An RNA of 177 nucleotides, treated with DMS and read out base by base.
The RNA was probed in 150 mM KOAc, 10 mM MgCl2 and 150 mM bicine (pH 8.5) at 24 C.
[RMDB]
RNA sequence: GGGAACGACUCGAGUAGAGUCGAAAAGAUAUGGAUCCGUAAGCUCGCACACCGAGGAGAACACACUAUUCGGAAACGAAUAGUGUGUUCUUACAGUGUGAACUACGAGAUAACGGAUCCUAAGUCACCGUACUAGUGUGUUCGCACACUAGUACGGAAAAGAAACAACAACAACAAC
Reactivity to DMS in 0.01 (KOAc 150mM, MgCl2 10mM, bicine 150mM(pH8.5), 24C), signal-to-noise 1, nucleotides 027 to 126: g000a020u000a300u010g010g000a010u010c000c000g000u030a090a250g010c000u000c000g110c000a050c000a010c000c040g000a300g050g010a030g010a050a000c000a000c000a010c000u000a010u000u000c010g000g000a150a110a260c010g020a000a000u000a000g020u000g000u000g000u000u000c000u000u000a020c010a040g000u000g010u000g020a040a070c160u020a300c070g020a010g000a010u000a290a040c000g010g010a030u010c000c000u000a010a090g000u020c050a300